[RMDB]
RNA sequence: GGGAACGACUCGAGUAGAGUCGAAAAAGACUAGGUACGCCUAGUCAAAGUGUUCUGGGAUAGAUAGGCGAUCUCCUUGCAAUCCACCUUUCCAUCCUGGGCAUUGGAGCUACGGUACGCCGUAGCACUUGCAGUCGGCGUUCGCGCCGACUGCAAGAAAAGAAACAACAACAACAAC
Reactivity to 2A3 in 0.01 (KOAc 150mM, MgCl2 10mM, bicine 150mM(pH8.5), 24C), signal-to-noise 2, nucleotides 027 to 126: a000g010a000c000u000a000g000g000u070a050c230g090c010c000u010a000g000u000c000a000a000a050g040u050g010u060u250c030u030g000g000g000a000u010a020g000a010u030a000g020g010c050g000a030u010c080u080c040c050u100u220g000c010a000a050u040c010c000a100c030c010u000u000u000c010c010a010u000c020c000u000g000g000g000c010a000u050u030g160g080a080g000c010u000a000c000g040g010u030a040c250g060c000c000g000u000a000g010c000a010
Reactivity to DMS in 0.01 (KOAc 150mM, MgCl2 10mM, bicine 150mM(pH8.5), 24C), signal-to-noise 1, nucleotides 027 to 126: a130g000a000c000u000a000g000g110u000a070c290g110c000c000u000a010g000u040c050a070a270a000g040u000g000u000u030c000u000g090g000g000a000u000a200g000a110u000a000g000g000c300g000a000u000c070u000c000c010u040u050g080c040a300a060u000c070c000a120c000c110u000u000u000c000c090a000u000c040c000u000g000g000g000c000a000u000u000g130g130a030g000c000u000a000c000g000g000u000a000c130g000c000c000g000u000a000g010c000a030